[RMDB]
RNA sequence: GGGAACGACUCGAGUAGAGUCGAAAACUACCAUCGCUGGGUGGUAGAGUGGCGUUGCACCUUCAACAGCUCCUGAAGCGCGCACGGGAGACAUGAAGGCGCAACGCGCUACCACCUGUGCUGAAGCGCGCACGGCAACCGAAAGGUGCGGGAACAACAAGGUUUCAUACUUCGGUAUGAAACCUUGAAAAGAAACAACAACAACAAC
Reactivity to 2A3 in 0.01 (KOAc 150mM, MgCl2 10mM, bicine 150mM(pH8.5), 24C), signal-to-noise 1, nucleotides 027 to 156: c040u040a060c000c020a070u130c020g010c000u000g000g000g000u020g020g020u020a000g040a030g070u280g190g000c000g000u010u000g000c010a040c030c000u010u020c060a270a170c070a220g000c000u010c000c000u030g080a250a060g020c000g000c010g000c010a010c000g000g050g000a020g020a000c100a180u300g000a010a000g000g000c010g000c000a000a000c000g000c000g010c000u000a000c000c000a020c030c000u010g000u000g000c000u010g020a250a110g000c000g000c000g000c020a040c020g000g000c000a000a020c000c010g030a130a020a020g000g010u000g000c000g000g040g080a070a070c060a000a040